[RMDB]
RNA sequence: GGGAACGACUCGAGUAGAGUCGAAAACAUGUACCCUUCGGGGUACAUGAACAUAACGCGGGCGUGGCACACCGCCGGAGCUAGCCUCAGAUAGUCCCAGUAUUAGGUGCGCCUUCGGGCGCACCAAGAUUACCGUUCACUUCGGUGAACGGUAAUCAAAAGAAACAACAACAACAAC
Reactivity to DMS in 0.01 (KOAc 150mM, MgCl2 10mM, bicine 150mM(pH8.5), 24C), signal-to-noise 1, nucleotides 027 to 126: c000a000u000g000u020a000c000c020c000u000u040c290g020g000g020g060u000a000c000a000u010g000a070a080c110a120u010a030a050c150g000c120g000g030g000c020g000u000g000g030c050a100c090a120c040c030g060c060c050g020g000a100g010c010u000a190g000c040c030u000c040a110g000a100u010a100g000u000c010c000c000a160g020u010a080u010u020a110g010g020u010g010c000g000c020c010u000u000c220g020g000g060c000g000c010a000c000c000a020a030